[RMDB]
RNA sequence: GGGAACGACUCGAGUAGAGUCGAAAAGAUAUGGAACGAAUGCAUGAACUACCAAGAAGUAUCGGAAACGAUACGGAUUGGCAUGCACUAUUCCUAAGUCAAACUCUAACCCUUCGGGGUUAGAGAACAAUAUUUGUGAGUUCGCUCACAAAUAUUGAAAAGAAACAACAACAACAAC
Reactivity to 2A3 in 0.01 (KOAc 150mM, MgCl2 10mM, bicine 150mM(pH8.5), 24C), signal-to-noise 6, nucleotides 027 to 126: g020a020u060a040u160g000g010a030a020c080g080a300a260u020g000c010a000u000g020a120a130c100u150a090c300c010a020a010g020a030a010g010u000a010u010c010g020g010a070a040a030c000g000a000u010a000c010g010g010a010u010u010g020g000c010a000u000g000c000a000c010u040a050u030u000c010c000u020a110a010g050u030c050a080a050a210c010u000c000u000a000a010c010c000c000u020u050c300g100g000g000g000u000u000a000g000a000g000a000a000
Reactivity to DMS in 0.01 (KOAc 150mM, MgCl2 10mM, bicine 150mM(pH8.5), 24C), signal-to-noise 9, nucleotides 027 to 126: g010a030u000a300u000g000g000a010a010c100g010a060a060u000g000c000a010u000g000a100a060c100u010a300c000c000a000a010g000a300a260g000u000a000u000c000g010g000a100a080a200c010g000a020u000a010c000g010g000a300u000u000g000g000c010a000u000g000c000a000c050u000a200u000u000c010c000u000a050a160g010u000c030a090a100a130c010u000c000u000a010a000c000c000c000u000u020c210g020g000g010g000u000u000a000g000a000g000a040a080